[RMDB]
RNA sequence: GGGAACGACUCGAGUAGAGUCGAAAAUUCCGGGCGACCAUGGGUGAUCAGCCCUAUUACCGCGACCUCGUCCAGGAGAUCUAUGAAGAGGACCUCGGACCCCACUCGGAACAGAAGCGGGCCGAGGCCACUACCAUAACUUCGGUUAUGGUAGUGGAAAAGAAACAACAACAACAAC
Reactivity to DMS in 0.01 (KOAc 150mM, MgCl2 10mM, bicine 150mM(pH8.5), 24C), signal-to-noise 6, nucleotides 027 to 126: u010u010c010c010g000g020g010c030g030a030c110c090a130u010g010g010g010u000g000a060u010c220a130g000c020c010c020u000a060u010u000a060c050c040g010c070g020a120c140c090u000c020g010u000c030c050a130g030g000a070g010a080u000c060u010a090u010g020a110a100g010a110g010g010a150c020c000u000c010g020g000a160c090c020c000c050a120c020u010c020g000g010a110a110c180a090g000a070a040g030c250g000g000g010c010c000g000a010g000g000
Reactivity to 2A3 in 0.01 (KOAc 150mM, MgCl2 10mM, bicine 150mM(pH8.5), 24C), signal-to-noise 6, nucleotides 027 to 126: u050u000c010c000g010g030g010c020g020a030c050c090a170u110g040g000g030u070g050a250u140c060a030g040c000c020c000u020a050u030u140a040c020c010g040c040g110a060c010c020u020c010g020u000c020c020a040g020g020a050g010a030u030c040u120a130u240g110a120a060g030a080g120g050a070c000c010u050c010g300g050a300c030c010c000c000a010c010u010c010g110g090a220a080c060a200g080a120a010g040c090g020g000g000c000c000g000a000g000g000